RNA sequence: GGGAACGACUCGAGUAGAGUCGAAAAUGAAAAUGUGCGUCCGUCCCGAAGCUGCGCGCUCGGUCGAAGAGGACGACCACAGCCGAUAGAGGACUGCCGGUCUUCGGUCAAGGGAAAAAGAAAAAAACACUAUGAUAGGGUUCGCCCUAUCAUAGUGAAAAGAAACAACAACAACAAC
Reactivity to DMS in 0.01 (KOAc 150mM, MgCl2 10mM, bicine 150mM(pH8.5), 24C), signal-to-noise 4, nucleotides 027 to 126: u010g000a070a040a100a090u010g020u000g010c080g000u000c020c020g000u000c020c000c010g000a110a120g030c020u000g010c100g010c120g000c030u000c030g000g000u000c110g010a120a110g000a140g000g020a050c020g010a050c050c020a050c040a050g010c060c040g010a110u010a090g010a110g010g010a030c050u000g010c090c080g020g000u000c020u000u000c030g000g010u000c060a050a100g000g010g020a040a040a060a070a090g050a020a010a060a080a120a080a130
Reactivity to 2A3 in 0.01 (KOAc 150mM, MgCl2 10mM, bicine 150mM(pH8.5), 24C), signal-to-noise 2, nucleotides 027 to 126: u170g020a000a030a000a070u070g010u030g030c020g010u000c050c000g000u000c000c010c000g010a110a030g030c030u080g020c080g000c020g010c140u010c030g000g030u040c060g000a060a010g110a150g110g010a010c000g010a020c010c020a010c020a010g040c000c030g040a060u110a080g110a050g050g040a050c020u050g080c060c010g030g030u020c000u060u050c020g030g030u040c030a090a100g000g000g060a010a090a020a030a030g140a090a060a000a000a050a010a000